[RMDB]
An RNA of 177 nucleotides, treated with DMS and 2A3 and read out base by base. The RNA was probed in 150 mM KOAc, 10 mM MgCl2 and 150 mM bicine (pH 8.5) at 24 C.

RNA sequence: GGGAACGACUCGAGUAGAGUCGAAAAGAUAUGGACGAAGAACAUGAACUACUAGUCAUCGUUCGGAAACGAACGGCUAGCAUGGGAGUCCUAAGUCAAAACAUCCAUUACUUCGGUAAUGGAUGAACCAACUGUAGCAGUUCGCUGCUACAGUUGGAAAAGAAACAACAACAACAAC
Reactivity to DMS in 0.01 (KOAc 150mM, MgCl2 10mM, bicine 150mM(pH8.5), 24C), signal-to-noise 2, nucleotides 027 to 126: g000a070u000a300u000g000g020a000c000g000a110a150g020a130a140c030a000u000g000a080a050c090u010a300c010u000a010g000u000c070a140u000c060g020u010u010c050g000g000a070a140a180c000g020a010a000c020g000g020c000u000a000g000c000a000u000g000g000g000a140g000u000c000c000u000a020a140g010u000c060a050a070a110a210c010a000u000c020c000a000u010u000a010c000u000u010c220g060g000u000a010a000u000g000g000a000u000g000a020a110
Reactivity to 2A3 in 0.01 (KOAc 150mM, MgCl2 10mM, bicine 150mM(pH8.5), 24C), signal-to-noise 3, nucleotides 027 to 126: g060a020u080a050u160g030g000a040c030g160a210a180g030a100a010c020a020u030g020a060a050c040u160a030c010u010a300g000u070c070a210u200c130g010u020u010c010g020g000a070a060a020c010g000a000a000c010g000g000c010u010a000g000c020a000u010g010g050g020a020g000u000c010c010u020a170a030g050u060c010a020a020a090a160c000a000u000c010c000a000u000u020a010c020u020u090c280g100g000u010a000a000u010g010g000a000u000g000a000a020